[RMDB]
RNA sequence: GGGAACGACUCGAGUAGAGUCGAAAAGAUAUGGAUCCACUCCCCACCGAGUACAUCGGAAACGAUGUGACUCGAGGUGGAGUCCUAAGUCAAAAGGCGUUACAAUUCUUCGGAAUUGUAACGCCAACAAUACGAGAUAGUUCGCUAUCUCGUAUUGAAAAGAAACAACAACAACAAC
Reactivity to DMS in 0.01 (KOAc 150mM, MgCl2 10mM, bicine 150mM(pH8.5), 24C), signal-to-noise 3, nucleotides 027 to 126: g010a090u000a240u010g000g020a220u000c010c030a100c010u000c100c020c010c050a300c110c000g000a010g010u000a020c000a000u000c000g000g000a110a080a160c010g010a010u000g010u000g010a010c000u000c000g010a060g020g010u000g000g000a030g010u010c010c000u000a070a160g010u010c100a070a070a140a090g010g010c000g010u000u000a000c000a010a010u000u000c000u000u010c220g020g010a010a010u000u000g000u000a000a000c000g010c000c000a000a010
Reactivity to 2A3 in 0.01 (KOAc 150mM, MgCl2 10mM, bicine 150mM(pH8.5), 24C), signal-to-noise 3, nucleotides 027 to 126: g060a040u230a110u270g020g000a020u000c020c010a020c030u100c050c030c000c000a040c030c020g010a000g010u010a000c000a000u000c010g040g000a020a050a020c010g010a010u000g050u060g180a090c010u000c010g010a000g000g020u050g000g010a020g050u000c000c010u100a160a040g140u130c070a020a050a060a110g020g000c010g000u000u000a000c000a000a000u010u010c010u040u170c300g030g000a010a000u010u000g010u000a010a000c000g000c000c000a000a000